[RMDB]
RNA sequence: GGGAACGACUCGAGUAGAGUCGAAAAAGAAUAUUAUGGAUUUCGUUAAUAAUGAUACAAGACAAAUUGCUAAAAACUUAUUAGGUGUCAAAGUGAUUUAUCAGGAUACCACUCAAACGUAUACAGGAAGGUACUGAUAGUUCGCUAUCAGUACCUUAAAAGAAACAACAACAACAAC
Reactivity to DMS in 0.01 (KOAc 150mM, MgCl2 10mM, bicine 150mM(pH8.5), 24C), signal-to-noise 1, nucleotides 027 to 126: a090g020a160a070u000a040u000u000a150u020g000g030a100u000u000u020c010g020u020u020a080a060u000a060a080u010g000a000u000a000c150a110a170g000a000c060a020a000a010u010u000g010c030u000a060a090a130a060a010c040u000u020a090u010u000a130g000g080u020g010u000c100a050a010a030g020u000g000a000u010u000u000a030u000c020a090g000g020a150u000a050c000c050a050c060u000c110a050a030a040c060g020u000a050u020a080c160a050g020g020